The data come from the RNA Mapping Database (RMDB), libraries RFM100 and RFMREP. Structure probing data (2A3 and DMS) for a 177-nucleotide construct. For DMS the reverse transcriptase was MarathonRT. Conditions: 150 mM KOAc, 10 mM MgCl2 and 150 mM bicine (pH 8.5), 24 C. DMS (dimethyl sulfate) methylates the pairing face of unpaired adenines and cytosines.

RNA sequence: GGGAACGACUCGAGUAGAGUCGAAAAGUCAAUGCGGAUUGCCUGUGGCGGUGUUGGCUGGACGACCGAGUGUCGGCGGAUACCUCCGGGCAGCUUGUCUGCUUGCAUGCUCCCAUGGGCUGGCUCCGUUUGUUAGACUGUUCGCAGUCUAACAAACAAAAGAAACAACAACAACAAC
Reactivity to 2A3 in 0.01 (KOAc 150mM, MgCl2 10mM, bicine 150mM(pH8.5), 24C), signal-to-noise 6, nucleotides 027 to 126: g060u070c020a000a030u140g020c020g040g030a090u130u070g030c010c010u140g040u180g070g020c070g010g010u020g020u030u030g150g010c050u040g060g030a000c010g030a040c030c090g080a120g040u210g030u020c010g010g010c020g030g000a020u040a070c000c010u000c010c020g000g000g010c010a000g010c020u080u120g050u030c010u030g010c000u000u040g010c010a030u090g020c020u010c010c010c000a020u080g010g000g000c020u030g010g010c020u020c040c010
Reactivity to DMS in 0.01 (KOAc 150mM, MgCl2 10mM, bicine 150mM(pH8.5), 24C), signal-to-noise 3, nucleotides 027 to 126: g010u010c030a020a030u020g060c040g000g040a030u020u020g010c030c010u010g020u000g000g000c150g010g030u010g040u010u000g010g000c000u010g000g000a120c030g020a080c100c120g000a150g020u020g000u010c020g000g010c020g000g000a090u000a020c050c010u000c030c000g010g000g000c040a020g010c120u050u010g000u010c020u000g020c030u000u020g020c060a100u020g000c100u010c030c010c020a080u010g010g000g000c030u010g000g010c040u010c040c070